[RMDB]
RNA sequence: GGGAACGACUCGAGUAGAGUCGAAAAUGAAAAUGUGCGUCCCUCCCGAAGCUGCGCGCUCGGUCGAAGAGGACGAGCACAGCCGAUAGAGGACUGCCGGUCUUCGGUCAAGGGAAAAAGAAAAAAAUACAUGUGAUAGAUUCGUCUAUCACAUGUAAAAAGAAACAACAACAACAAC
Reactivity to DMS in 0.01 (KOAc 150mM, MgCl2 10mM, bicine 150mM(pH8.5), 24C), signal-to-noise 6, nucleotides 027 to 126: u020g010a090a060a090a080u010g010u000g010c080g010u000c020c000c020u010c030c000c010g010a100a080g010c010u000g010c150g010c180g010c010u000c000g000g000u010c060g000a120a140g010a220g010g000a010c000g010a040g010c010a110c030a040g000c020c060g010a130u000a080g000a050g010g010a040c020u010g020c110c090g000g010u000c010u000u000c010g010g020u010c080a090a080g010g010g000a040a040a080a070a090g020a030a010a020a100a070a090a130
Reactivity to 2A3 in 0.01 (KOAc 150mM, MgCl2 10mM, bicine 150mM(pH8.5), 24C), signal-to-noise 3, nucleotides 027 to 126: u150g030a050a040a010a100u160g030u060g060c030g030u000c010c000c000u000c010c000c010g020a040a020g000c010u030g000c100g000c010g000c140u000c030g060g070u040c030g030a160a070g060a130g110g000a010c020g000a010g010c010a020c010a030g010c010c010g030a040u110a110g100a040g030g010a050c030u120g060c030c020g010g000u000c000u020u040c020g000g020u040c040a050a070g080g020g040a010a060a010a040a030g140a060a080a010a010a020a000a020
The record gives the reactivity of an RNA of 177 nucleotides to DMS and 2A3. Source: RMDB library M2PK90, as collected in RNAgym. The reactions ran in a buffer of 150 mM KOAc, 10 mM MgCl2 and 150 mM bicine (pH 8.5), at 24 C.